Chemical mapping of a 177-nucleotide RNA with DMS and 2A3.
[RMDB]
RNA sequence: GGGAACGACUCGAGUAGAGUCGAAAACACCUCAUCGAAGCAAAAGGUUCGCUGAAUUAUGAUUGCGUGGCACGCUCGGUCAAGCUCGUGUGGUAUCACACACAUGGCGCCAGGUCACACCAAAAGCGGAUAAACUGGGUUUCGACCCAGUUUAUCCAAAAGAAACAACAACAACAAC
Reactivity to DMS in 0.01 (KOAc 150mM, MgCl2 10mM, bicine 150mM(pH8.5), 24C), signal-to-noise 2, nucleotides 027 to 126: c080a150c060c010u000c080a060u000c080g020a100a060g000c060a060a070a120a110g000g010u000u010c030g010c010u000g010a050a060u020u040a030u050g000a080u000u010g040c040g000u030g000g000c080a070c050g050c020u000c020g050g000u000c130a050a090g000c050u020c050g070u000g000u040g010g010u030a090u020c210a090c110a030c050a030c080a080u000g010g020c010g010c040c020a070g030g020u010c100a080c080a110c090c060a040a050a040a070g000c190
Reactivity to 2A3 in 0.01 (KOAc 150mM, MgCl2 10mM, bicine 150mM(pH8.5), 24C), signal-to-noise 6, nucleotides 027 to 126: c070a050c000c000u040c020a090u060c020g100a100a020g070c070a110a080a040a110g090g040u050u060c030g010c060u040g060a120a060u200u100a100u200g100a110u050u100g030c020g020u030g020g010c060a030c090g080c050u050c050g020g000u080c060a080a030g010c010u020c100g020u040g000u000g000g040u160a120u300c020a030c000a000c000a000c000a100u080g040g000c010g010c020c000a010g020g010u060c030a030c000a040c040c020a050a110a050a000g090c050
DMS adducts were read by reverse transcription with MarathonRT. Reactivities are rounded to 0.1 and cut off at 0 and 3. The RNA was probed in 150 mM KOAc, 10 mM MgCl2 and 150 mM bicine (pH 8.5) at 24 C.